[RMDB]
RNA sequence: GGGAACGACUCGAGUAGAGUCGAAAAGAUAUGGAGCGGUAGGACAUGCUCGAGGGUCGGAAACGACCCGAGAGCAACAGCCUACUCGCUCCUAAGUCAAACGCGUUAAUCUUCGGAUUAACGCGAAGUUAAUUAUAGACUUCGGUCUAUAAUUAACAAAAGAAACAACAACAACAAC
Reactivity to DMS in 0.01 (KOAc 150mM, MgCl2 10mM, bicine 150mM(pH8.5), 24C), signal-to-noise 3, nucleotides 027 to 126: g000a010u000a020u010g000g000a000g040c010g020g010u000a010g010g010a030c050a300u020g030c000u000c000g000a300g000g000g040u000c000g010g000a000a010a050c000g020a000c000c000c000g000a300g000a040g070c000a070a020c260a090g000c000c000u000a010c010u010c010g020c010u000c000c010u010a000a060g000u000c000a090a130a300c020g010c000g010u000u010a010a000u010c000u000u010c230g020g010a010u020u000a000a000c000g010c010g000a010a050
Reactivity to 2A3 in 0.01 (KOAc 150mM, MgCl2 10mM, bicine 150mM(pH8.5), 24C), signal-to-noise 2, nucleotides 027 to 126: g000a010u030a010u070g000g000a000g000c020g000g000u000a000g000g040a070c170a300u300g000c040u000c030g000a190g000g000g000u010c020g000g030a110a000a030c000g000a000c000c050c010g010a000g010a010g000c010a020a000c050a000g000c000c010u000a000c000u000c000g010c000u010c000c000u000a010a000g000u020c020a030a050a180c040g000c000g000u010u010a000a000u010c000u030u080c300g160g010a000u010u010a000a000c000g010c000g020a010a000

An RNA of 177 nucleotides, treated with DMS and 2A3 and read out base by base. DMS (dimethyl sulfate) methylates the pairing face of unpaired adenines and cytosines. Values are in units of 0.01, from 0 to 300, in steps of 10. 2A3 adducts were read by reverse transcription with SuperScript II with manganese.